[RMDB]
This 177-nucleotide RNA was probed chemically with 2A3 and DMS. The RNA was probed in 150 mM KOAc, 10 mM MgCl2 and 150 mM bicine (pH 8.5) at 24 C.
RNA sequence: GGGAACGACUCGAGUAGAGUCGAAAAUACGCGGUCUUAACAUUGUCGUGGUGUGGCAGUUGGUUUCCUUAUCCCUCCGUCAAUGGUGGGUCACUGUGGGUGCAGCAAAGCCUUGAGACGUAGACUAUAUUAUUACGUCCUUCGGGACGUAAUAAUAAAAAGAAACAACAACAACAAC
Reactivity to 2A3 in 0.01 (KOAc 150mM, MgCl2 10mM, bicine 150mM(pH8.5), 24C), signal-to-noise 2, nucleotides 027 to 126: u150a010c070g010c030g050g030u010c010u060u140a110a050c050a110u060u090g050u100c050g040u070g100g040u070g040u040g040g020c020a050g020u040u050g040g010u050u010u070c020c000u060u030a120u090c000c000c010u000c020c000g080u080c070a050a040u100g030g000u030g000g060g000u040c040a020c060u030g020u070g090g030g000u070g010c010a010g010c010a050a020a020g000c010c000u030u020g030a020g000a010c010g040u030a030g050a000c060u040a030
Reactivity to DMS in 0.01 (KOAc 150mM, MgCl2 10mM, bicine 150mM(pH8.5), 24C), signal-to-noise 5, nucleotides 027 to 126: u000a060c130g020c050g010g000u000c060u000u000a090a090c080a060u010u010g010u010c080g020u010g010g020u000g020u010g010g010c030a030g010u000u000g020g010u010u000u000c030c030u010u000a140u000c030c010c000u000c030c030g020u010c180a080a120u010g000g010u000g010g000g010u010c080a050c070u000g030u010g010g000g010u000g010c040a050g010c070a040a060a130g010c050c020u000u000g000a200g010a070c070g020u000a070g000a120c090u000a120

2A3 adducts were read by reverse transcription with SuperScript II with manganese. In probing experiments dimethyl sulfate is read out at A N1 and C N3, which are open when not base-paired.